Annotation: An RNA of 177 nucleotides, treated with DMS and 2A3 and read out base by base. Conditions: 150 mM KOAc, 10 mM MgCl2 and 150 mM bicine (pH 8.5), 24 C.

RNA sequence: GGGAACGACUCGAGUAGAGUCGAAAAUCUUUGGCUUUCGAGCCAAAGAGUGGGUGCAAUGUCCUUUAAGGACCAAACACGGAAAAACCGUGAAAGGACAAAAAAAUCACAGUUUCGACUGUGAUAAUCGAACUUAUCAAUUCGUUGAUAAGUUCGAAAAAGAAACAACAACAACAAC
Reactivity to DMS in 0.01 (KOAc 150mM, MgCl2 10mM, bicine 150mM(pH8.5), 24C), signal-to-noise 5, nucleotides 027 to 126: u000c000u000u000u000g000g000c010u000u000u020c190g020a020g020c000c000a010a000a010g000a020g010u010g000g000g020u000g000c120a150a100u010g000u000c000c000u000u020u000a130a140g020g010a100c040c030a070a080a300c000a010c000g000g000a120a110a100a130a160c010c000g000u000g000a020a040a020g000g000a020c030a010a000a030a070a050a120a050u000c000a010c000a000g010u000u000u010c140g010a030c000u000g010u000g000a000u000a020a080
Reactivity to 2A3 in 0.01 (KOAc 150mM, MgCl2 10mM, bicine 150mM(pH8.5), 24C), signal-to-noise 4, nucleotides 027 to 126: u000c000u000u000u010g000g000c000u050u080u100c230g090a010g000c000c000a000a010a000g010a010g010u080g060g070g040u180g080c040a100a170u080g000u000c000c000u030u050u090a100a060g090g000a010c000c010a020a050a010c010a000c020g010g040a230a180a050a040a070c000c000g000u010g000a030a000a000g000g000a010c000a040a080a020a010a010a010a020u010c000a000c000a000g000u000u060u140c180g090a020c000u000g000u000g010a010u040a010a060
The DMS profile rests on 5,262 reads. Values cover nucleotides 27 to 126. The data come from the RNA Mapping Database (RMDB), library M2PK50. DMS adducts were read by reverse transcription with MarathonRT. For 2A3 the reverse transcriptase was SuperScript II with manganese.